[RMDB]
RNA sequence: GGGAACGACUCGAGUAGAGUCGAAAAUUAUCUGGGGGGUGGAGCGACCGGAAGAAGACAUACGUUUUUGUGCCUAGUUCAUGAUGCAUUGUUGAAGGAAGGGCCGGACUUUUUGAAUGUAAGCAUCAAAUUAGUGGGAUUUCGAUCCCACUAAUUUAAAAGAAACAACAACAACAAC
Reactivity to DMS in 0.01 (KOAc 150mM, MgCl2 10mM, bicine 150mM(pH8.5), 24C), signal-to-noise 7, nucleotides 027 to 126: u020u030a060u020c060u010g010g010g000g000g000g010u010g010g000a100g010c060g020a090c060c040g020g010a060a070g010a090a070g000a040c080a080u020a080c130g010u000u000u000u020u010g020u010g000c040c020u010a080g000u010u010c070a060u020g010a030u000g000c030a130u000u010g010u010u000g010a120a090g010g000a080a060g000g000g010c030c020g010g000a090c050u000u010u020u030u010g010a060a050u000g000u010a050a110g010c050a030u000c090
Reactivity to 2A3 in 0.01 (KOAc 150mM, MgCl2 10mM, bicine 150mM(pH8.5), 24C), signal-to-noise 4, nucleotides 027 to 126: u090u040a080u080c040u040g000g030g000g000g000g000u050g030g020a040g020c020g020a060c010c000g060g010a040a030g030a080a000g070a040c040a060u170a070c050g040u050u020u030u040u080g040u020g030c030c030u080a080g040u050u050c060a040u090g040a020u030g020c070a090u000u160g060u090u070g050a050a010g040g030a010a050g050g040g000c000c000g020g050a060c030u080u120u040u040u210g110a080a020u040g030u060a060a040g030c000a010u050c030